This 177-nucleotide RNA was probed chemically with DMS and 2A3. DMS adducts were read by reverse transcription with MarathonRT. It was measured as part of the RMDB library OK2TRN. The RNA was probed in 150 mM KOAc, 10 mM MgCl2 and 150 mM bicine (pH 8.5) at 24 C. For DMS, 10,922 sequencing reads were counted. Values are in units of 0.01, from 0 to 300, in steps of 10.
RNA sequence: GGGAACGACUCGAGUAGAGUCGAAAAGCGGCUAGAGAUCAAUAGAUGUGAGGCUAUUGACAAGACUCAGGACCUACUAGCUAGCCUGCAUGCAAGGAGCAACAAGCAAACAUCACUGAAUCGUGGGCCAUUAGAUGCUAUUCGUAGCAUCUAAUGGAAAAGAAACAACAACAACAAC
Reactivity to DMS in 0.01 (KOAc 150mM, MgCl2 10mM, bicine 150mM(pH8.5), 24C), signal-to-noise 8, nucleotides 027 to 126: g010c060g000g010c020u000a030g010a130g000a150u000c020a040a050u010a020g000a070u000g010u010g000a080g010g020c010u000a080u000u000g010a060c180a100a080g000a080c040u000c050a070g020g010a100c070c020u000a080c050u010a050g000c020u000a050g000c010c010u000g040c060a060u010g010c080a070a080g010g000a100g010c050a070a050c090a060a090g000c090a050a060a090c110a050u000c040a060c050u010g000a080a060u000c070g010u000g010g010g000
Reactivity to 2A3 in 0.01 (KOAc 150mM, MgCl2 10mM, bicine 150mM(pH8.5), 24C), signal-to-noise 8, nucleotides 027 to 126: g030c010g010g020c020u040a020g000a060g010a280u040c020a020a040u030a030g060a060u110g140u120g150a060g270g000c010u010a020u030u060g020a020c040a100a030g020a040c030u040c120a020g020g080a080c010c000u040a080c020u020a070g020c000u000a030g020c000c020u040g020c020a020u090g010c020a060a060g060g020a060g080c010a010a060c010a060a030g050c040a060a090a040c020a070u090c010a020c070u060g100a140a030u080c060g040u080g010g060g010